[RMDB]
Chemical mapping of a 177-nucleotide RNA with 2A3 and DMS.
The reactions ran in a buffer of 150 mM KOAc, 10 mM MgCl2 and 150 mM bicine (pH 8.5), at 24 C.

RNA sequence: GGGAACGACUCGAGUAGAGUCGAAAAGUAGUGAGGCAAGGUCGUCUACGACGUUCCACUAUGAAGCGGUGGGGAGGCUUUGGAAGUACGUGGACGAUCUAGAGUCUCCACCACAUCAACAGGGAUGCCGCGUAGGUUCGUUCGCGAACUUACGCGGAAAAGAAACAACAACAACAAC
Reactivity to 2A3 in 0.01 (KOAc 150mM, MgCl2 10mM, bicine 150mM(pH8.5), 24C), signal-to-noise 2, nucleotides 027 to 126: g080u100a000g020u020g060a010g000g000c000a010a000g020g000u000c010g010u000c000u020a030c010g010a000c020g180u000u020c010c000a000c010u100a100u190g110a020a000g040c010g010g100u120g030g020g010g010a020g040g000c000u000u010u040g010g000a000a000g000u090a100c000g030u000g030g010a030c000g000a010u000c000u000a000g000a000g010u000c000u000c010c000a010c000c000a010c000a010u000c010a000a100c010a030g050g030g010a020u030g000
Reactivity to DMS in 0.01 (KOAc 150mM, MgCl2 10mM, bicine 150mM(pH8.5), 24C), signal-to-noise 3, nucleotides 027 to 126: g000u010a040g030u030g000a020g020g000c020a100a010g000g010u010c000g010u010c000u010a020c010g010a050c100g000u000u000c000c030a150c300u000a060u020g010a050a090g010c070g030g010u030g030g000g000g000a170g000g020c030u000u010u010g000g000a000a010g010u020a050c010g010u000g030g010a000c030g010a000u000c000u010a020g000a100g010u000c000u010c010c010a050c000c020a030c030a020u000c050a030a030c080a040g010g000g000a040u020g000